[RMDB]
Chemical mapping of a 207-nucleotide RNA with 2A3. For 2A3, 1,742 sequencing reads were counted. Conditions: 150 mM KOAc, 10 mM MgCl2 and 150 mM bicine (pH 8.5), 24 C. It was measured as part of the RMDB library M2RFPK. Values cover nucleotides 27 to 156.
RNA sequence: GGGAACGACUCGAGUAGAGUCGAAAAAGCGAUGAUACGUCAUCGCAACGAUUGCCUGAUCGUAAAACAGGAGACGGCCGUGGCCGCGACCACGUAAAAAAGCCUAACGUGGUCUACGGACCACGAAAAAAGCGCGGAACGUUCGCGUUCCGCGCAACUAAGAGUAACUGUUCGCAGUUACUCUUAGAAAAGAAACAACAACAACAAC
Reactivity to 2A3 in 0.01 (KOAc 150mM, MgCl2 10mM, bicine 150mM(pH8.5), 24C), signal-to-noise 2, nucleotides 027 to 156: a000g020c020g000a000u010g000a000u010a120c210g030u010c020a000u000c000g000c000a000a020c000g000a000u010u020g020c000c000u010g030a010u010c030g120u190a000a000a020a020c000a000g010g020a040g120a050c150g110g050c130c020g020u010g000g010c010c010g010c010g010a000c000c010a000c000g010u040a030a050a030a090a060a060g120c040c060u040a050a000c000g000u000g020g010u020c010u040a080c030g040g000a160c010c000a010c000g020a040a010a000a000a000a000g000c000g000c000g000g020a000a000c000g040u060u060c180g010c000g120u000u000c010c000g000c020g000c000a000a000